[RMDB]
RNA sequence: GGGAACGACUCGAGUAGAGUCGAAAAGGGUCACAUUGGUCCUAGCCUUGUGUGCUUUUUGCCUUGUAGGUUAUGUACUAAUUAAAUUUGCUAUAGGUUUGUUUACAGGUGCUUGUACAAUUUUUAGAAGCUAAUGACAGUUCGCUGUCAUUAGCUUAAAAGAAACAACAACAACAAC
Reactivity to DMS in 0.01 (KOAc 150mM, MgCl2 10mM, bicine 150mM(pH8.5), 24C), signal-to-noise 1, nucleotides 027 to 126: g010g010g010u000c050a080c090a110u000u010g010g020u020c030c090u000a090g000c020c000u020u020g010u010g010u010g010c020u000u000u000u000u000g010c040c010u000u000g000u000a040g010g000u000u010a020u000g010u000a050c050u000a030a060u000u010a020a100a090u010u010u010g010c060u000a080u000a090g000g000u000u000u000g020u000u010u000a090c150a070g030g020u000g020c040u000u000g000u000a040c060a030a070u010u010u000u000u000a120g000